About this RNA:
Structure probing data (DMS and 2A3) for a 177-nucleotide construct. The 2A3 profile rests on 1,314 reads. Reactivities are rounded to 0.1 and cut off at 0 and 3. The DMS profile rests on 1,600 reads.

RNA sequence: GGGAACGACUCGAGUAGAGUCGAAAAACUCGACUGAUGACUACGGUCAUCAGUCGAGAACUGAGUUUAUUUGAGUACUUAGACGGCCAUUAGAGCAACGAUCUAGCACCAUAUAAAUUCAGUAUAAUCCCAUGGCAAUUUUCGAAUUGCCAUGGGAAAAAGAAACAACAACAACAAC
Reactivity to DMS in 0.01 (KOAc 150mM, MgCl2 10mM, bicine 150mM(pH8.5), 24C), signal-to-noise 1, nucleotides 027 to 126: a100c000u000c000g000a030c000u000g000a000u010g020a010c000u000a080c200g050g000u010c000a000u000c010a070g000u000c000g010a000g000a040a060c000u030g000a010g000u000u000u000a000u000u010u010g030a210g040u000a040c020u080u020a000g000a000c030g000g010c000c010a300u030u110a130g000a090g040c050a080a060c040g010a130u000c000u000a000g030c050a000c000c000a000u000a000u000a000a000a000u000u010c000a000g000u000a040u010a110a130
Reactivity to 2A3 in 0.01 (KOAc 150mM, MgCl2 10mM, bicine 150mM(pH8.5), 24C), signal-to-noise 3, nucleotides 027 to 126: a000c000u000c000g000a020c000u000g000a000u000g020a040c010u020a030c160g160g000u000c010a010u000c010a010g020u020c010g000a000g000a000a000c000u000g000a000g000u000u010u050a100u030u010u060g090a110g030u020a030c020u050u110a030g000a000c020g060g000c000c050a280u240u190a090g030a070g050c080a250a200c090g070a180u000c000u010a000g030c020a000c010c000a010u010a000u000a010a000a000u020u000c000a000g030u000a010u030a000a050

DMS adducts were read by reverse transcription with MarathonRT.
The data come from the RNA Mapping Database (RMDB), library RFM100.